[RMDB]
RNA sequence: GGGAACGACUCGAGUAGAGUCGAAAAGAUAUGGACCGGUUAGACAUGCCUGGUUGUCGGAAACGACAGAGAGGGCAACAGCUAACCCGGUCCUAAGUCAAAACGGUAUAUGUUCGCAUAUACCGAACAGGAGUUAUCACUUCGGUGAUAACUCCUGAAAAGAAACAACAACAACAAC
Reactivity to DMS in 0.01 (KOAc 150mM, MgCl2 10mM, bicine 150mM(pH8.5), 24C), signal-to-noise 2, nucleotides 027 to 126: g010a010u000a050u020g000g020a010c000c010g010g020u000u000a000g020a020c060a300u020g000c010c020u000g010g020u000u000g040u000c000g020g000a050a030a040c000g020a050c000a010g010a080g030a140g010g030g020c020a070a070c260a060g010c000u020a010a020c100c080c090g060g010u000c000c000u000a000a070g000u010c010a100a100a060a230c040g020g020u000a010u000a000u010g040u010u020c240g040c000a020u020a000u000a010c010c010g010a050a060
Reactivity to 2A3 in 0.01 (KOAc 150mM, MgCl2 10mM, bicine 150mM(pH8.5), 24C), signal-to-noise 2, nucleotides 027 to 126: g000a020u000a000u060g000g000a000c000c000g000g000u000u000a030g010a180c240a300u300g000c020c020u210g120g000u090u010g050u020c010g000g000a000a020a010c010g040a000c020a020g070a020g110a170g160g000g000c160a240a080c180a060g000c030u000a000a010c050c010c040g000g000u000c000c000u000a010a000g000u010c000a000a030a110a250c030g000g020u000a020u010a000u010g000u050u100c220g000c130a000u010a010u020a050c000c000g020a020a000
Source: RMDB library TTRDES, as collected in RNAgym.
The record gives the reactivity of an RNA of 177 nucleotides to DMS and 2A3.
For DMS the reverse transcriptase was MarathonRT.
Reactivities are given for positions 27 through 126.
The RNA was probed in 150 mM KOAc, 10 mM MgCl2 and 150 mM bicine (pH 8.5) at 24 C.
For DMS, 1,967 sequencing reads were counted.